[RMDB]
RNA sequence: GGGAACGACUCGAGUAGAGUCGAAAAUGGCUCUAUCCUGAUGGGAGUGUCAACGUAGAUAAGAUUAAAGAGCAUUUAGAGGAGAACGAACGCCGGGUAGAAGAACAAGAAAGCAAGAGAGAGUUAGAAGAAACUGACGUUUUCUAAAAUAUCGCGAUGAAACGUUGUAAUUCGUUACAACGUUUCAAAAAGAAACAACAACAACAAC
Reactivity to DMS in 0.01 (KOAc 150mM, MgCl2 10mM, bicine 150mM(pH8.5), 24C), signal-to-noise 1, nucleotides 027 to 156: u000g050g000c010u010c010u000a080u000c030c000u000g060a100u030g020g010g010a110g030u010g000u010c100a040a100c050g030u010a110g000a100u010a100a090g000a180u010u010a110a030a140g010a050g030c060a090u010u000u010a090g000a090g030g030a120g000a100a050c000g000a140a080c060g060c040c010g020g050g060u000a050g010a060a050g020a050a070c050a070a070g010a050a100a100g010c090a010a030g000a090g000a070g000a100g010u000u000a050g010a040a060g030a020a020a070c070u010g000a070c240g030u000u000u010u000c020u000a060a030a020a120u000a120u000c050g030c060g040a250
Reactivity to 2A3 in 0.01 (KOAc 150mM, MgCl2 10mM, bicine 150mM(pH8.5), 24C), signal-to-noise 2, nucleotides 027 to 156: u050g010g000c010u000c020u050a050u030c040c030u090g040a090u080g030g080g010a050g010u060g030u020c050a040a050c030g090u080a030g030a140u140a090a090g020a030u170u100a110a040a050g060a020g010c030a020u080u150u140a060g000a010g030g010a020g000a100a020c060g030a040a010c050g030c060c000g030g020g000u040a020g030a080a000g010a000a020c040a020a020g030a110a060a000g000c020a050a000g030a010g000a000g020a010g040u030u050a020g010a080a000g020a000a120a010c030u030g020a010c050g050u060u000u090u030c060u080a040a020a040a030u120a040u080c080g000c070g020a020